[RMDB]
RNA sequence: GGGAACGACUCGAGUAGAGUCGAAAAUCGGUCUAUUAGUGAACCAUCUCUCCAGGGAUUGUGAAAGAUGUUCUACUAGAAAUAUUCUUGUUAUUGCUUCGACUCAUAUUCCCCAAAAAGUGGAUCCGAUUGGAGCAUCAUUCGUGAUGCUCCAAUCAAAAGAAACAACAACAACAAC
Reactivity to 2A3 in 0.01 (KOAc 150mM, MgCl2 10mM, bicine 150mM(pH8.5), 24C), signal-to-noise 5, nucleotides 027 to 126: u060c030g000g030u010c050u070a170u050u040a100g020u030g070a020a020c040c020a040u020c030u020c010u020c020c000a050g100g100g130a220u200u190g050u080g100a060a020a000g000a000u010g020u030u000c030u080a040c020u030a000g070a060a130a020u160a060u090u030c040u100u070g110u150u120a120u070u160g060c060u000u040c010g020a000c020u000c010a020u000a100u150u050c010c000c000c020a010a090a080a050a020g050u080g050g030a050u050c030c060
Reactivity to DMS in 0.01 (KOAc 150mM, MgCl2 10mM, bicine 150mM(pH8.5), 24C), signal-to-noise 1, nucleotides 027 to 126: u020c060g020g020u040c060u000a060u040u000a030g010u020g030a040a080c150c100a000u010c010u010c000u000c000c020a000g000g030g000a140u110u000g050u070g060a040a060a040g000a010u000g000u000u000c010u050a030c010u000a000g000a130a080a020u010a030u010u000c060u010u030g000u000u010a020u000u000g010c070u000u000c010g000a090c120u010c090a030u000a220u000u000c000c000c030c170a000a060a030a030a030g000u000g000g000a100u030c020c190